[RMDB]
RNA sequence: GGGAACGACUCGAGUAGAGUCGAAAAUCGACCGACUUGUAUGUGACUGCUUCGUUUUAAAUGUUAGACUGAAUAAUAUUGAUAAGUUCGUGGAGUCUUUGUUCUUGGUCGCAAGAAUAGCUCGUUAAUUAUUAGCCGGUUUCGACCGGCUAAUAAUAAAAGAAACAACAACAACAAC
Reactivity to DMS in 0.01 (KOAc 150mM, MgCl2 10mM, bicine 150mM(pH8.5), 24C), signal-to-noise 1, nucleotides 027 to 126: u020c060g020a130c080c020g010a060c070u020u010g000u010a070u000g000u010g000a060c080u000g030c060u000u000c070g000u000u000u000u000a020a060a060u000g000u000u000a080g040a170c190u010g020a120a120u000a040a020u010a060u010u010g000a130u000a050a100g030u000u010c030g020u000g000g000a060g000u000c050u000u000u000g000u000u000c020u030u000g000g010u000c220g010c140a050a040g000a030a040u000a100g010c040u000c050g010u020u000a090